[RMDB]
RNA sequence: GGGAACGACUCGAGUAGAGUCGAAAAGCGGACGCACCAGUGGAAGCCUCUGUACCCGGGUACCUGCCGCCCUGGGGACCCACCUUGCAGGGAGCUGACUGAGCUUUGGGGGUAGCCCUUCCGGCACCAAGCCGCAAUUAUUCGUAAUUGCGGCUUGAAAAGAAACAACAACAACAAC
Reactivity to DMS in 0.01 (KOAc 150mM, MgCl2 10mM, bicine 150mM(pH8.5), 24C), signal-to-noise 3, nucleotides 027 to 126: g020c050g000g010a070c130g000c060a090c060c030a060g010u010g020g020a150a070g000c010c010u000c020u010g010u000a080c180c090c080g010g010g030u000a040c030c030u000g000c070c070g000c070c030c010u000g030g000g000g000a060c040c020c030a100c070c070u000u000g000c020a040g020g010g010a100g000c020u000g000a090c050u000g000a120g010c020u000u000u000g020g010g020g010g000u000a120g000c020c000c030u000u000c040c040g010g020c030a110c190
Reactivity to 2A3 in 0.01 (KOAc 150mM, MgCl2 10mM, bicine 150mM(pH8.5), 24C), signal-to-noise 1, nucleotides 027 to 126: g020c050g060g060a020c050g030c060a030c050c020a040g000u050g080g090a090a010g000c000c000u000c020u080g040u070a080c000c020c000g000g000g000u060a110c030c010u050g090c010c030g030c030c020c040u040g040g000g000g000a000c000c030c000a040c030c000u020u050g030c000a030g070g020g000a060g000c040u040g020a120c000u040g010a000g000c000u090u090u090g000g020g010g030g020u070a050g090c010c000c000u050u040c020c030g020g030c020a030c070